[RMDB]
RNA sequence: GGGAACGACUCGAGUAGAGUCGAAAACCGUGACGCUCUCUUGUCAUCAUCACCUUCUUCUUGUCUGAACUCAUCAACAUUUCAGCCAAAUUACUGUGCUGCUAAGUCACUGGGAAGAUCAGGACCCAACCGGUGGCUAAUUCGUUAGCCACCGGUUAAAAGAAACAACAACAACAAC
Reactivity to DMS in 0.01 (KOAc 150mM, MgCl2 10mM, bicine 150mM(pH8.5), 24C), signal-to-noise 2, nucleotides 027 to 126: c070c020g040u070g000a090c110g010c050u000c000u010c010u000u010g010u010c050a050u000c080a070u000c030a030c030c000u010u020c020u010u000c020u000u010g060u000c050u000g000a020a090c130u000c050a110u000c160a040a100c060a080u000u020u000c040a030g000c060c020a010a140a160u010u000a150c300u020g000u070g000c040u000g010c040u020a030a070g000u020c020a050c080u000g000g070g000a150a060g000a010u000c070a050g000g030a120c000c060c050
Reactivity to 2A3 in 0.01 (KOAc 150mM, MgCl2 10mM, bicine 150mM(pH8.5), 24C), signal-to-noise 3, nucleotides 027 to 126: c000c020g010u030g020a000c030g020c040u000c000u010c010u040u080g070u070c030a030u020c000a000u020c040a070c010c030u030u030c020u020u010c000u030u080g040u050c000u030g020a070a050c010u010c050a170u030c020a120a110c020a140u040u040u040c010a030g000c030c030a060a040a050u150u080a080c050u040g020u080g060c030u000g000c050u080a100a070g040u030c010a010c060u030g050g000g000a050a010g020a060u030c030a000g000g060a060c000c000c000
Chemical mapping of a 177-nucleotide RNA with DMS and 2A3. It was measured as part of the RMDB libraries RFM100 and RFMREP. The reactions ran in a buffer of 150 mM KOAc, 10 mM MgCl2 and 150 mM bicine (pH 8.5), at 24 C. In probing experiments dimethyl sulfate is read out at A N1 and C N3, which are open when not base-paired.